[RMDB]
RNA sequence: GGGAACGACUCGAGUAGAGUCGAAAAGCAUAUAGUGGUUAUUAUCCUUCUAAUGGUCUAGUACAGCCUCCAUUUAUAGGAGAGGUUGAGCUUGGAGUGAGAUUAACAGAUGCUGGAGGUACGGGCAUUGAUACCAUAUCGGACUUAAGAGCUGUGGCCGUAGAACGUCUUUCGAGACGUUCUACGGAAAAGAAACAACAACAACAAC
Reactivity to 2A3 in 0.01 (KOAc 150mM, MgCl2 10mM, bicine 150mM(pH8.5), 24C), signal-to-noise 1, nucleotides 027 to 156: g000c010a000u020a000u070a210g090u070g040g060u050u050a000u150u040a040u170c020c000u040u140c170u110a140a040u040g010g040u070c080u070a000g020u150a250c040a040g010c000c030u030c020c020a080u120u300u000a220u190a050g070g030a110g010a000g040g000u000u010g020a040g100c030u000u040g010g040a030g000u130g090a120g000a030u070u120a150a140c030a070g030a000u030g150c020u070g000g160a010g000g000u170a010c100g130g000g000c080a100u000u010g040a120u090a070c000c000a010u010a050u130c040g030g000a000c020u000u100a200a090g030a000g000c030u010g000u000g090g040